[RMDB]
RNA sequence: GGGAACGACUCGAGUAGAGUCGAAAAGAACCAACAGUUGAGAAACUUGCACCUGUGGAAUCAAAAGAAACAUCUGAAGUAGAACCAGCUGAAAUUGUUGAGCAAAAGGAUGUUCCAGUGCCAGAGAAUCGAAGGAUACGUUCGCGUAUCCUUCGAUAAAAGAAACAACAACAACAAC
Reactivity to DMS in 0.01 (KOAc 150mM, MgCl2 10mM, bicine 150mM(pH8.5), 24C), signal-to-noise 1, nucleotides 027 to 126: g020a220a160c060c010a060a080c160a050g000u000u010g020a110g000a100a100a070c040u000u020g010c070a030c090c060u010g010u000g030g000a110a040u030c070a010a040a100a110g010a100a050a050c030a000u000c010u010g000a080a150g010u040a040g000a130a080c070c030a020g000c020u020g010a070a060a040u000u010g000u010u000g010a100g000c040a020a090a070a140g030g000a070u000g020u000u000c050c070a120g060u010g050c020c060a040g000a070g020a060
Background
An RNA of 177 nucleotides, treated with DMS and read out base by base. For DMS, 747 sequencing reads were counted. The RNA was probed in 150 mM KOAc, 10 mM MgCl2 and 150 mM bicine (pH 8.5) at 24 C. DMS adducts were read by reverse transcription with MarathonRT.